[RMDB]
RNA sequence: GGGAACGACUCGAGUAGAGUCGAAAAGAAGACGUGACGAAAAGUCACGAAAAGAGCUCGGAGGUACCUCGAGCAAAGAAAAGGUACCAAGACGGAAACGUCAGACAUCGGAGACGAUGUCAAAAGAAUGCUACGAUAGGUUCGCCUAUCGUAGCAUAAAAGAAACAACAACAACAAC
Reactivity to DMS in 0.01 (KOAc 150mM, MgCl2 10mM, bicine 150mM(pH8.5), 24C), signal-to-noise 3, nucleotides 027 to 126: g020a140a090g020a120c020g000u000g010a000c020g000a080a130a140a200g000u000c030a010c030g000a030a030a040a120g010a120g010c000u000c000g000g000a070g000g010u000a000c000c000u010c000g020a000g020c030a050a180a050g000a030a020a020a020g020g010u000a000c010c010a190a160g000a000c020g000g000a110a120a180c000g020u030c020a250g020a000c000a010u010c000g000g000a150g010a170c020g000a010u000g020u000c010a040a010a060a050g040a190
Reactivity to 2A3 in 0.01 (KOAc 150mM, MgCl2 10mM, bicine 150mM(pH8.5), 24C), signal-to-noise 4, nucleotides 027 to 126: g150a060a030g090a070c010g000u000g000a000c010g070a070a010a190a060g000u000c000a000c000g020a000a000a010a010g140a020g010c000u000c000g070g000a250g090g000u000a000c000c000u000c000g000a010g020c130a070a020a010g080a000a040a010a010g010g000u000a000c000c000a000a020g000a010c020g000g050a060a070a000c010g000u010c010a010g010a010c000a000u000c000g000g020a050g020a070c000g000a020u000g000u000c000a000a010a000a000g140a020
Chemical mapping of a 177-nucleotide RNA with DMS and 2A3. For DMS the reverse transcriptase was MarathonRT. The 2A3 profile rests on 5,755 reads.